Conditions: 150 mM KOAc, 10 mM MgCl2 and 150 mM bicine (pH 8.5), 24 C. Structure probing data (2A3) for a 207-nucleotide construct. For 2A3, 865 sequencing reads were counted. For 2A3 the reverse transcriptase was SuperScript II with manganese.

RNA sequence: GGGAACGACUCGAGUAGAGUCGAAAAGGCCAACACCAGUAUGGCAGCUGCGAAGGCCCUGAGCUCUGGGAGCCCACGCUCUUUAUUGGUGAUCAAACAGAAGCAGGUGGUGAGGACGUGAGGACAUGGGGUUAGAAAGGAAGCGGUGCAUCAAGCACGACUUUUACCAGUUCGCUGGUAAAAGUCGAAAAGAAACAACAACAACAAC
Reactivity to 2A3 in 0.01 (KOAc 150mM, MgCl2 10mM, bicine 150mM(pH8.5), 24C), signal-to-noise 2, nucleotides 027 to 156: g040g000c040c000a040a030c050a080c030c050a000g040u040a090u140g050g110c160a010g010c000u100g070c060g110a130a030g030g010c010c030c000u040g020a050g040c050u010c090u090g040g020g000a030g060c000c020c000a050c060g030c000u080c000u070u100u030a090u050u080g050g000u010g090a050u040c040a040a170a000c030a020g090a060a000g010c030a020g020g000u060g010g010u010g010a030g000g010a010c050g000u010g020a060g030g000a010c030a110u100g010g030g010g000u000u030a090g060a030a070a020g010g050a020a000g000c040g110g010u030g040c000a090u120c070a040a050g000c000a000
As a SHAPE reagent, 2A3 marks flexible, mostly unpaired nucleotides at the ribose 2'-OH.